[RMDB]
Structure probing data (DMS and 2A3) for a 177-nucleotide construct.
RNA sequence: GGGAACGACUCGAGUAGAGUCGAAAAGCGUGGUCGUACGCGACCACGCAAGAUGGUAAGAGAGAUUACCAUCUGUUAAGUGACAUGGAUAAGAUCUCUCAAAGCUGCGGCAUACGUGCCGCAGCAAGGUAUAAUGCGCUUUCGAGCGCAUUAUACCAAAAGAAACAACAACAACAAC
Reactivity to DMS in 0.01 (KOAc 150mM, MgCl2 10mM, bicine 150mM(pH8.5), 24C), signal-to-noise 1, nucleotides 027 to 126: g060c050g100u000g000g110u010c000g140u000a070c300g000c000g000a000c030c000a000c020g040c000a000a040g000a000u000g000g000u000a060a200g000a030g000a110g000a000u020u000a000c020c020a000u000c000u000g020u030u000a180a090g020u010g000a080c160a260u050g030g000a080u040a060a090g000a050u000c000u030c010u000c000a040a070a040g010c030u000g030c000g000g010c030a000u020a020c230g030u010g000c000c020g080c000a000g030c000a000a000
Reactivity to 2A3 in 0.01 (KOAc 150mM, MgCl2 10mM, bicine 150mM(pH8.5), 24C), signal-to-noise 2, nucleotides 027 to 126: g010c000g020u010g000g040u000c000g010u070a020c280g000c010g080a000c000c040a000c010g000c000a000a000g000a010u030g000g000u040a130a000g000a000g000a000g000a020u030u030a000c000c000a020u040c030u010g030u060u110a220a220g060u070g250a060c070a160u100g120g080a080u130a140a100g020a060u000c000u010c000u000c000a040a080a000g020c000u000g000c000g000g000c010a010u020a040c260g070u030g000c000c000g000c010a000g000c000a000a000

The RNA was probed in 150 mM KOAc, 10 mM MgCl2 and 150 mM bicine (pH 8.5) at 24 C. Reactivities are given for positions 27 through 126. For 2A3, 1,672 sequencing reads were counted.